The data come from the RNA Mapping Database (RMDB), library 15KREP. The record gives the reactivity of an RNA of 177 nucleotides to 2A3 and DMS. The RNA was probed in 150 mM KOAc, 10 mM MgCl2 and 150 mM bicine (pH 8.5) at 24 C. Values cover nucleotides 27 to 126.
RNA sequence: GGGAACGACUCGAGUAGAGUCGAAAAAGACCGGGGAGCUUCGAAGAUCUCUCUAUUCUCCAGAAAGGAGGAAGGAGCUCUCGAACGCCCCCCCGACCCUCGGAUGGGCCGCUUCCGGCAGGGAAGCCAGAUUGAUAACGUUCGCGUUAUCAAUCUGAAAAGAAACAACAACAACAAC
Reactivity to 2A3 in 0.01 (KOAc 150mM, MgCl2 10mM, bicine 150mM(pH8.5), 24C), signal-to-noise 1, nucleotides 027 to 126: a020g070a050c060c010g000g000g000g000a030g010c020u050u000c000g030a160a040g010a010u020c000u000c020u000c000u060a300u060u000c000u030c000c010a040g300a210a130a050g040g010a010g000g010a000a020g000g000a000g000c000u000c000u010c020g000a010a000c070g000c000c000c000c000c010c000c000g050a070c040c030c000u000c010g190g050a100u050g070g040g020c000c030g000c040u000u000c010c000g120g220c110a040g030g020g030a000a000g020c000
Reactivity to DMS in 0.01 (KOAc 150mM, MgCl2 10mM, bicine 150mM(pH8.5), 24C), signal-to-noise 1, nucleotides 027 to 126: a160g010a170c160c130g000g020g000g000a060g000c010u000u000c000g000a070a070g000a030u000c000u000c000u020c030u000a090u020u000c000u000c000c000a240g000a110a190a200g000g000a010g010g010a030a130g000g010a000g000c130u000c010u000c000g010a010a020c130g010c000c000c000c000c000c000c020g000a040c010c010c000u000c100g000g000a110u000g000g000g000c040c070g000c000u000u000c010c000g010g000c140a120g050g000g000a010a020g000c040
Description: For 2A3 the reverse transcriptase was SuperScript II with manganese.